Conditions: 150 mM KOAc, 10 mM MgCl2 and 150 mM bicine (pH 8.5), 24 C. This 177-nucleotide RNA was probed chemically with DMS. For DMS the reverse transcriptase was MarathonRT.

RNA sequence: GGGAACGACUCGAGUAGAGUCGAAAACCCGAAGCAAGUAAGAUAGAGAAAAAGCGGUUCUCGGGAGCUUCAGUUGUUUCCACCGGGUAGUAGCCGAAGCGACAGCGCAAAGGGGGCGAGGGGUGGUGUUAUAUAUUCACUUCGGUGAAUAUAUAACAAAAGAAACAACAACAACAAC
Reactivity to DMS in 0.01 (KOAc 150mM, MgCl2 10mM, bicine 150mM(pH8.5), 24C), signal-to-noise 2, nucleotides 027 to 126: c010c000c010g000a040a110g010c060a060a090g000u010a040a070g030a090u010a110g010a090g020a030a070a070a090a150g000c070g010g010u000u000c010u010c010g010g040g020a080g000c030u000u000c070a070g010u000u000g010u010u000u000c010c040a180c050c060g010g000g010u000a060g030u000a110g020c030c040g010a060a080g030c050g000a050c200a090g000c090g010c050a040a060a100g010g000g000g010g020c040g010a070g010g010g000g030u000g000g010u000